This 177-nucleotide RNA was probed chemically with 2A3 and DMS. For DMS the reverse transcriptase was MarathonRT. 2A3 adducts were read by reverse transcription with SuperScript II with manganese. 2A3 is a SHAPE reagent: it acylates the 2'-hydroxyl of flexible nucleotides of all four kinds.
RNA sequence: GGGAACGACUCGAGUAGAGUCGAAAAGAUAUGGAUCCACACAGCAACAGCUGUAGGUCGGAAACGACCUGACAGACAUGCUGGGUGGAUCCUAAGUCAAAGACUGUGAGGUUCGCCUCACAGUCAACUAUAGAUAAGGGUUCGCCCUUAUCUAUAGAAAAGAAACAACAACAACAAC
Reactivity to 2A3 in 0.01 (KOAc 150mM, MgCl2 10mM, bicine 150mM(pH8.5), 24C), signal-to-noise 6, nucleotides 027 to 126: g000a000u020a000u040g000g000a000u010c000c000a000c010a010c000a000g020c040a070a300c070a300g020c010u000g010u010a000g010g000u000c000g000g000a000a010a000c000g010a010c000c010u030g200a020c000a000g030a010c080a240u300g000c000u000g010g010g000u000g050g000a000u010c000c000u000a000a000g000u000c010a040a020a100g010a000c000u000g000u010g000a010g050g040u100u220c300g120c110c000u000c000a000c000a000g000u000c000a000a000
Reactivity to DMS in 0.01 (KOAc 150mM, MgCl2 10mM, bicine 150mM(pH8.5), 24C), signal-to-noise 7, nucleotides 027 to 126: g010a010u000a020u000g000g000a000u000c000c000a010c000a030c000a010g020c010a160a100c240a150g000c000u000g000u000a020g000g010u000c000g010g000a010a010a030c000g010a010c000c000u000g010a030c000a010g000a030c100a190u010g010c000u000g000g010g040u000g000g000a000u000c000c000u000a000a050g000u000c000a190a130a130g000a010c010u000g020u010g010a020g000g010u000u020c300g010c010c000u000c000a000c010a000g000u000c010a020a110
It was measured as part of the RMDB library TTRDES.